The record gives the reactivity of an RNA of 177 nucleotides to 2A3 and DMS. The DMS profile rests on 2,102 reads. Source: RMDB library TTRDEL, as collected in RNAgym. The 2A3 profile rests on 4,565 reads. The reactions ran in a buffer of 150 mM KOAc, 10 mM MgCl2 and 150 mM bicine (pH 8.5), at 24 C.
[RMDB]
RNA sequence: GGGAACGACUCGAGUAGAGUCGAAAAGAUAUGGAGCGAAGUCAGCGAUGAGCUGUGUCGGAAACGACCAGCGAGCUGUCGCGCUCCUAAGUCAAAACAAGUGCUACUGUUCGCAGUAGCACUUGAAGUCCUGUCUGUAGUUCGCUACAGACAGGACAAAAGAAACAACAACAACAAC
Reactivity to 2A3 in 0.01 (KOAc 150mM, MgCl2 10mM, bicine 150mM(pH8.5), 24C), signal-to-noise 3, nucleotides 027 to 126: g020a020u080a020u140g010g000a000g000c020g010a300a150g100u040c010a000g020c070g170a290u230g170a030g000c000u020g060u150g000u120c000g000g030a060a080a060c000g000a000c010c000a000g020c010g010a020g000c000u010g010u010c010g010c000g010c020u010c000c000u000a030a010g030u040c020a000a010a110a210c000a000a010g010u000g000c000u010a010c000u010g040u130u140c300g000c220a010g010u000a000g000c000a000c000u000u000g000a010a000
Reactivity to DMS in 0.01 (KOAc 150mM, MgCl2 10mM, bicine 150mM(pH8.5), 24C), signal-to-noise 3, nucleotides 027 to 126: g000a030u010a300u000g010g010a020g020c000g020a060a180g030u000c010a000g000c000g010a180u010g010a300g010c010u000g000u030g020u010c000g010g000a090a080a110c010g010a010c000c010a020g010c010g010a080g010c000u000g010u000c030g020c000g000c010u020c010c010u000a000a060g010u000c010a070a080a140a200c000a000a010g010u000g010c000u000a010c000u010g000u000u020c160g010c020a030g010u010a000g030c000a000c000u000u000g000a030a080